[RMDB]
RNA sequence: GGGAACGACUCGAGUAGAGUCGAAAACGUGGCGUGCCAAAUAGUUUUCCAUGAUCAAGCCAAACAGAUAGGGGCUGAUGCCGGAGAACCCUUCUUCAUCAACGGUCAAGGUGCAACAGAUCCCACGCGAAGAAUCCUAGUUCGCUAGGAUUCUUCGAAAAGAAACAACAACAACAAC
Reactivity to DMS in 0.01 (KOAc 150mM, MgCl2 10mM, bicine 150mM(pH8.5), 24C), signal-to-noise 2, nucleotides 027 to 126: c100g020u000g030g030c060g000u000g030c020c020a110a070a090u000a100g010u000u000u000u000c020c000a080u010g000a110u000c050a070a170g030c000c030a050a070a160c170a150g010a200u010a130g020g000g000g020c040u000g000a030u000g000c170c100g000g010a040g000a050a030c050c040c010u000u000c030u020u000c040a070u000c090a050a100c090g000g000u010c070a060a070g000g020u000g030c070a020a100c060a100g010a090u000c000c000c010a060c200g020
Reactivity to 2A3 in 0.01 (KOAc 150mM, MgCl2 10mM, bicine 150mM(pH8.5), 24C), signal-to-noise 2, nucleotides 027 to 126: c090g050u030g040g030c050g020u040g010c010c000a000a100a110u160a060g010u000u050u070u000c030c020a040u190g030a060u080c050a070a040g040c040c000a070a110a100c060a020g190a140u220a090g170g000g030g000c020u010g020a040u030g050c060c070g040g000a020g010a030a040c010c000c030u090u070c010u090u060c020a090u040c020a050a100c020g000g030u040c030a060a030g000g010u040g000c000a060a050c000a040g070a030u030c000c040c000a020c030g090
About this RNA: An RNA of 177 nucleotides, treated with DMS and 2A3 and read out base by base. The reactions ran in a buffer of 150 mM KOAc, 10 mM MgCl2 and 150 mM bicine (pH 8.5), at 24 C. The 2A3 profile rests on 1,497 reads. DMS adducts were read by reverse transcription with MarathonRT.